An RNA of 177 nucleotides, treated with 2A3 and read out base by base.
[RMDB]
RNA sequence: GGGAACGACUCGAGUAGAGUCGAAAAUCAGUGUUGAAUUUAAUUAUAUAGGAACAAAAUAUUCCUCAGUAAAUUUGCUUGCUAAAUAUUCUGUCACAUUUACUUCCCCUUUGAGAAAUGGCUUAAUAUCCUGAACUCAAUUCGUUGAGUUCAGGAUAAAAGAAACAACAACAACAAC
Reactivity to 2A3 in 0.01 (KOAc 150mM, MgCl2 10mM, bicine 150mM(pH8.5), 24C), signal-to-noise 1, nucleotides 027 to 126: u110c020a050g010u040g040u040u120g040a020a070u020u200u250a110a080u100u110a150u040a030u020a120g030g000a020a000c020a070a300a120a000u170a080u010u010c000c020u030c000a020g010u110a000a020a270u010u050u080g050c060u080u070g020c020u070a120a050a000u150a080u040u000c040u010g050u180c000a010c040a000u090u110u050a060c030u010u040c010c000c000c020u010u140u060g070a110g020a020a090a000u060g010g000c000u000u000a040a000u000
Reactivities are given for positions 27 through 126. The RNA was probed in 150 mM KOAc, 10 mM MgCl2 and 150 mM bicine (pH 8.5) at 24 C.